[RMDB]
RNA sequence: GGGAACGACUCGAGUAGAGUCGAAAAGGUGCGGGCCGCGGCGGCCCGAACGGGUCAUCCGUGGUGGACGUUGAGCCAAUUGUCCGACGAGUCGGCGAUCGAGUUGGACGUUCGGGCCGCGCCGUCGCCGUUCCAUCGAUUUCGAUCGAUGGAACGGAAAAGAAACAACAACAACAAC
Reactivity to 2A3 in 0.01 (KOAc 150mM, MgCl2 10mM, bicine 150mM(pH8.5), 24C), signal-to-noise 1, nucleotides 027 to 126: g080g010u120g010c020g040g040g050c110c070g050c030g130g000c020g010g040c010c000c000g000a010a010c000g000g040g080u000c000a030u000c020c050g030u180g050g140u070g020g020a070c150g080u160u270g030a050g070c010c010a020a040u030u120g090u150c000c030g000a020c030g020a050g120u020c010g020g000c030g040a030u000c020g020a080g300u010u000g090g010a010c030g000u000u030c000g000g030g030c010c050g010c000g030c010c010g010u050c010g000
Reactivity to DMS in 0.01 (KOAc 150mM, MgCl2 10mM, bicine 150mM(pH8.5), 24C), signal-to-noise 1, nucleotides 027 to 126: g020g040u020g020c040g000g010g030c060c120g040c110g010g030c250g010g000c000c010c000g010a020a010c030g010g010g040u010c030a050u000c010c020g000u020g020g000u000g030g010a030c030g040u000u000g010a250g020c010c010a070a070u000u000g000u010c000c040g020a050c070g020a170g030u000c000g000g030c060g020a010u000c030g000a150g020u000u000g000g000a040c010g000u000u000c000g000g000g020c020c000g000c020g000c020c040g000u010c070g010
Annotation
Structure probing data (2A3 and DMS) for a 177-nucleotide construct. It was measured as part of the RMDB library OK2TRN. The 2A3 profile rests on 980 reads. Conditions: 150 mM KOAc, 10 mM MgCl2 and 150 mM bicine (pH 8.5), 24 C. Values are in units of 0.01, from 0 to 300, in steps of 10.